[RMDB]
RNA sequence: GGGAACGACUCGAGUAGAGUCGAAAACGCCAUCUCCCAGAGGCGCGGUUACUCCCUUGAGCCGUCGGUGCUUGGCGACGUUUUCCCUGAGGGAGCCCUGGGCGGCUGAGGCGGCAUCGUCAGGCAGUAGUAAGUUAAGUUUCGACUUAACUUACUAAAAAGAAACAACAACAACAAC
Reactivity to 2A3 in 0.01 (KOAc 150mM, MgCl2 10mM, bicine 150mM(pH8.5), 24C), signal-to-noise 9, nucleotides 027 to 126: c020g010c000c010a160u040c030u030c030c020c030a020g080a140g050g000c050g000c050g100g010u110u130a070c030u040c000c010c000u010u080g080a040g040c030c010g040u040c040g050g080u080g020c020u050u060g030g030c010g000a020c020g010u020u010u070u080c020c000c020u040g060a120g010g040g020a050g000c000c000c020u080g020g040g000c030g040g010c040u040g010a040g090g050c020g010g010c020a040u040c020g030u010c030a060g000g020c010a020g030
Reactivity to DMS in 0.01 (KOAc 150mM, MgCl2 10mM, bicine 150mM(pH8.5), 24C), signal-to-noise 9, nucleotides 027 to 126: c050g010c010c010a110u010c070u000c020c020c020a140g000a130g010g010c050g020c090g010g010u000u010a190c120u000c020c020c010u000u010g010a090g020c050c020g010u000c040g010g020u000g010c030u000u000g010g000c010g010a060c090g010u000u000u000u000c020c020c010u000g010a080g010g010g010a070g010c040c020c020u000g010g010g020c220g010g010c060u000g000a120g010g010c060g010g010c050a050u000c040g010u000c020a050g010g010c040a140g010